[RMDB]
RNA sequence: GGGAACGACUCGAGUAGAGUCGAAAACGGUUACGCCUUCUUCACCGUUAUCAAGGAAGGUACUCGGCCAUGCUAAGGGAAGCAUUAUUCCUUAGGCGCAUGUCGCCGCCAGCAUGGUGUGAGGGGAAAAAGUAUGCUGGGUUCGCCCAGCAUACAACAAUGUCCGAAUCUUCGGAUUCGGACAUUGAAAAGAAACAACAACAACAAC
Reactivity to 2A3 in 0.01 (KOAc 150mM, MgCl2 10mM, bicine 150mM(pH8.5), 24C), signal-to-noise 5, nucleotides 027 to 156: c020g010g010u050u080a040c060g020c010c000u010u000c000u110u100c040a020c010c010g220u130u200a050u130c060a020a000g060g000a000a000g000g010u030a050c010u000c010g030g000c000c010a000u000g000c000u040a050a060g020g000g030a010a020g020c080a230u080u150a130u190u110c010c000u030u110a080g000g000c000g010c050a150u260g110u300c030g010c030c000g010c010c020a010g000c000a010u010g000g010u040g120u140g020a020g000g010g020g050a080a070a010a010a010g000u000a000u000g000c000u000g010g010g030u030u060c140g100c020c000c000a000g010c000a000u000a000c000a000a000
Reactivity to DMS in 0.01 (KOAc 150mM, MgCl2 10mM, bicine 150mM(pH8.5), 24C), signal-to-noise 2, nucleotides 027 to 156: c030g020g010u000u000a070c060g040c030c000u000u000c000u010u010c060a070c010c040g010u010u000a040u010c180a040a050g010g010a020a020g050g050u000a080c000u000c030g030g020c000c010a000u010g010c000u000a250a170g010g030g000a020a050g020c150a210u000u000a170u000u010c000c000u000u000a160g030g050c010g010c030a120u000g030u010c060g030c030c000g020c110c070a070g000c020a040u000g000g050u010g000u000g000a050g000g000g000g000a050a040a090a130a160g030u000a000u000g000c000u000g000g010g010u010u000c300g000c010c000c000a050g000c000a010u010a000c010a070a090

The record gives the reactivity of an RNA of 207 nucleotides to 2A3 and DMS. It was measured as part of the RMDB library M2RFPK. Conditions: 150 mM KOAc, 10 mM MgCl2 and 150 mM bicine (pH 8.5), 24 C. The 2A3 profile rests on 4,682 reads. For DMS the reverse transcriptase was MarathonRT.